[RMDB]
RNA sequence: GGGAACGACUCGAGUAGAGUCGAAAAGAAUCACCGUACCUAUUUAGGUUUACGCUCCAAGAUCGGUGGAUAACAGCCCUAUCAAUAUCUAGGAGAACUGUGCUAUGUUUAGAAGAUUAGGUAGUCUAUUACACAGCCAUGUUCGCAUGGCUGUGAACAGUUCAAGCUGAUUCGUCAGCUUGAACUGAAAAGAAACAACAACAACAAC
Reactivity to 2A3 in 0.01 (KOAc 150mM, MgCl2 10mM, bicine 150mM(pH8.5), 24C), signal-to-noise 4, nucleotides 027 to 156: g040a020a050u060c000a000c010c000g020u040a030c000c010u050a150u290u240u300a040g000g000u010u050u040a030c010g000c020u000c010c000a030a000g010a020u030c010g000g010u030g070g040a030u050a130a060c040a060g060c010c010c000u070a090u140c080a090a050u030a010u160c010u010a000g020g000a010g020a020a050c050u050g030u050g080c010u070a040u120g070u020u090u060a120g030a170a030g030a150u110u040a060g080g050u000a020g040u000c010u050a090u080u110a050c000a000c000a010g000c000c000a000u000g020u030u050c120g010c130a000u000g000g000c000u000g000u000g000a000a000
Reactivity to DMS in 0.01 (KOAc 150mM, MgCl2 10mM, bicine 150mM(pH8.5), 24C), signal-to-noise 3, nucleotides 027 to 156: g020a120a110u000c010a140c030c010g020u000a040c020c000u000a180u010u010u010a050g000g010u000u000u000a070c100g020c020u000c010c020a100a090g010a040u000c030g030g020u000g010g040a090u000a080a120c070a190g000c020c010c010u000a160u010c030a030a170u000a050u000c050u010a130g000g020a090g000a070a060c080u000g010u010g000c040u000a070u000g000u000u010u010a080g010a080a110g000a100u000u000a020g020g030u010a070g010u000c050u000a110u010u000a160c000a010c010a010g020c000c000a020u000g040u000u000c270g010c020a030u000g010g010c000u000g010u000g010a020a100
An RNA of 207 nucleotides, treated with 2A3 and DMS and read out base by base. The DMS profile rests on 5,148 reads. Values cover nucleotides 27 to 156. 2A3 adducts were read by reverse transcription with SuperScript II with manganese. The reactions ran in a buffer of 150 mM KOAc, 10 mM MgCl2 and 150 mM bicine (pH 8.5), at 24 C. For DMS the reverse transcriptase was MarathonRT.